[RMDB]
RNA sequence: GGGAACGACUCGAGUAGAGUCGAAAAGAUCUCAUUAAUGUAGGUCAUUAUUGGUAUGUGAUACGUGUGUCGACGAUACUGCGGCACGCGUAUCGCUGGUAUCUAGAGUCGGUGCCAGAACUGACUAUCAUGUCUACCUCUUCGGGGGUAGGCAUGAAAAAGAAACAACAACAACAAC
Reactivity to DMS in 0.01 (KOAc 150mM, MgCl2 10mM, bicine 150mM(pH8.5), 24C), signal-to-noise 9, nucleotides 027 to 126: g010a030u000c010u000c020a280u030u030a080a080u030g010u040a050g010g010u000c010a070u020u020a090u020u010g000g010u020a040u020g010u010g000a010u000a000c010g000u000g010u000g010u000c000g000a090c080g020a180u050a090c170u040g010c010g000g000c000a000c010g000c000g010u000a000u000c000g010c000u000g000g020u010a020u010c040u010a090g000a060g010u000c030g000g010u000g000c040c060a100g010a080a060c050u010g000a040c040u000a160
Reactivity to 2A3 in 0.01 (KOAc 150mM, MgCl2 10mM, bicine 150mM(pH8.5), 24C), signal-to-noise 9, nucleotides 027 to 126: g030a030u010c010u010c030a080u080u300a160a160u170g150u210a040g040g060u050c040a040u020u200a090u090u170g080g010u110a100u100g040u030g000a000u000a000c000g000u000g000u000g000u010c010g020a260c030g060a240u090a300c210u300g020c000g000g000c000a000c000g000c000g000u000a000u000c000g000c000u000g030g000u040a030u020c040u050a040g020a020g160u050c030g020g010u040g050c040c050a030g030a070a040c040u040g020a010c010u020a040